This 207-nucleotide RNA was probed chemically with 2A3.
RNA sequence: GGGAACGACUCGAGUAGAGUCGAAAAGCAAGUUAGAAUUUCUGUUUUGAAAUUUUUUCAAUACUUCAAUCUAUUUAUUAGUUUGCAAAUAACGCGCCGUAUGCAGCAAAUUGGUUUCACUGCACAGCCCUUUGAAUGGUCGAGCAAUGUACCGUAACCUACUCCGAUUAUUCGUAAUCGGAGUAGGAAAAGAAACAACAACAACAAC
Reactivity to 2A3 in 0.01 (KOAc 150mM, MgCl2 10mM, bicine 150mM(pH8.5), 24C), signal-to-noise 1, nucleotides 027 to 156: g010c020a060a030g030u090u090a070g030a090a040u020u050u050c060u120g210u170u110u260u080g060a040a010a090u080u130u040u080u080u120c050a070a140u050a170c010u140u120c010a100a000u000c070u020a090u090u250u150a150u220u000a090g010u080u010u080g020c040a090a090a000u070a140a000c000g030c010g030c040c010g000u010a060u070g030c000a000g000c000a020a180a070u100u000g030g010u010u120u050c020a020c060u020g020c010a030c040a030g000c000c000c000u000u000u040g130a120a010u100g000g000u040c000g000a010g080c020a030a040u050g010u120a080c030c000g080u090a000a090